[RMDB]
RNA sequence: GGGAACGACUCGAGUAGAGUCGAAAAUCAAUCAGGAUGCAGCUCGUGCUUGUGACCCGCACCUGAUGUCUCCUCUCGUAGUGGCGGAAAGUAGUCCUACAUGCCAGAAAUGUCUCAGUGCGAGUACGUGCCGUCUAGGAUUCGUCCUAGACGGCACAAAAGAAACAACAACAACAAC
Reactivity to DMS in 0.01 (KOAc 150mM, MgCl2 10mM, bicine 150mM(pH8.5), 24C), signal-to-noise 2, nucleotides 027 to 126: u020c130a120a080u000c040a030g010g000a150u000g060c000a100g020c090u000c040g020u000g000c100u000u000g040u010g010a060c080c060c060g010c020a060c020c040u000g000a030u000g000u020c070u000c020c010u010c070u000c110g010u010a040g010u010g000g000c050g000g000a110a130a150g070u010a080g010u010c060c040u000a030c040a080u010g020c060c030a050g000a060a170a070u010g010u000c030u020c020a100g000u010g000c020g000a040g000u000a060c170
Reactivity to 2A3 in 0.01 (KOAc 150mM, MgCl2 10mM, bicine 150mM(pH8.5), 24C), signal-to-noise 2, nucleotides 027 to 126: u090c030a010a010u040c010a000g120g070a150u040g000c030a010g070c050u030c080g110u090g070c040u140u070g100u040g120a060c020c040c050g000c030a040c000c000u010g010a020u030g050u000c050u050c030c010u030c010u000c050g070u110a020g060u090g160g070c050g040g090a060a060a070g080u130a000g040u060c030c000u020a050c040a080u060g060c020c050a070g120a060a140a050u160g030u000c000u040c120a050g070u010g080c020g030a020g000u050a080c080